Source: RMDB library TTRINS, as collected in RNAgym. Structure probing data (DMS and 2A3) for a 177-nucleotide construct. The DMS profile rests on 1,036 reads. Reactivities are given for positions 27 through 126.
RNA sequence: GGGAACGACUCGAGUAGAGUCGAAAAGAUAUGGAACCAAGGGAGGCUUAAGCAACGUUGAAAUGUUCAUGUCGGAAACGACAUGAACAUGGAGUUGGUCACAGCCAUCGAUCUUGGUUCCUAAGUCCCCGGUAUACAUGUUCGCAUGUAUACCGGGAAAAGAAACAACAACAACAAC
Reactivity to DMS in 0.01 (KOAc 150mM, MgCl2 10mM, bicine 150mM(pH8.5), 24C), signal-to-noise 1, nucleotides 027 to 126: g030a160u000a300u000g000g000a020a010c000c000a000a030g000g030g000a030g030g040c000u000u000a160a190g010c000a010a030c020g010u000u050g040a170a090a020u000g010u000u000c000a010u000g010u000c000g010g000a170a160a200c010g000a000c000a010u000g000a000a010c010a000u000g000g000a100g010u000u000g010g020u000c100a140c300a000g000c000c000a220u000c220g000a060u030c010u000u020g000g000u030u000c000c000u010a020a100g000u000c030
Reactivity to 2A3 in 0.01 (KOAc 150mM, MgCl2 10mM, bicine 150mM(pH8.5), 24C), signal-to-noise 1, nucleotides 027 to 126: g000a040u100a060u270g040g020a000a000c030c000a020a010g010g040g000a090g000g050c010u070u040a140a030g120c010a020a020c030g280u270u040g000a050a070a010u000g000u000u010c010a000u030g000u000c010g000g060a080a060a130c010g010a010c000a010u020g010a000a010c000a000u000g000g010a030g000u040u010g070g180u210c230a070c070a010g040c010c010a180u300c010g070a020u040c010u000u000g000g000u000u040c030c000u000a030a000g070u070c000
Values are in units of 0.01, from 0 to 300, in steps of 10.